Structure probing data (DMS and 2A3) for a 207-nucleotide construct. The 2A3 profile rests on 1,697 reads. In probing experiments dimethyl sulfate is read out at A N1 and C N3, which are open when not base-paired. For 2A3 the reverse transcriptase was SuperScript II with manganese. The reactions ran in a buffer of 150 mM KOAc, 10 mM MgCl2 and 150 mM bicine (pH 8.5), at 24 C.
RNA sequence: GGGAACGACUCGAGUAGAGUCGAAAAACAACUGGCGGGCCAGGCAACCCCAGGCCCGGAGGGGCGUCAAUAUGUGGAUGAUCGGUUUAAUCAAUGGACUGGGCGAGGCGCUGGCAGCGAUGGCAGCGGCGAACCUACUCAAUACGCAACCAGCGCAGCUGUUGCAUAAGUUCGCUUAUGCAACAGCAAAAGAAACAACAACAACAAC
Reactivity to DMS in 0.01 (KOAc 150mM, MgCl2 10mM, bicine 150mM(pH8.5), 24C), signal-to-noise 1, nucleotides 027 to 156: a060c030a100a090c060u020g040g040c070g000g000g060c030c000a070g030g020c070a090a120c040c030c020c050a150g020g020c000c000c010g020g010a100g000g000g050g030c020g020u000c060a090a120u000a120u000g030u000g020g010a120u000g020a040u010c000g030g030u000u000u000a090a120u000c070a050a140u000g010g020a050c050u010g000g030g000c000g010a150g010g010c000g070c010u000g000g020c000a130g000c150g020a050u000g020g000c030a050g000c040g030g000c030g000a050a020c080c000u000a040c020u000c050a060a130u010a070c050g020c020a060a080c020c000a050g010c040g030c030a200
Reactivity to 2A3 in 0.01 (KOAc 150mM, MgCl2 10mM, bicine 150mM(pH8.5), 24C), signal-to-noise 2, nucleotides 027 to 156: a000c070a040a040c040u040g050g010c020g010g010g030c020c020a030g020g060c070a040a070c020c000c000c010a040g020g000c000c000c000g010g000a020g000g010g010g020c010g020u060c010a050a020u100a050u170g100u050g040g000a050u060g030a030u080c040g030g060u020u040u130a070a080u090c110a010a080u090g040g000a020c040u030g040g020g000c040g030a040g000g040c000g000c020u030g030g030c050a040g000c020g000a000u040g050g000c020a010g000c020g040g030c030g010a030a020c010c020u010a050c020u030c070a090a110u090a170c020g000c020a030a060c020c020a020g000c010g000c030a040
The DMS profile rests on 2,671 reads.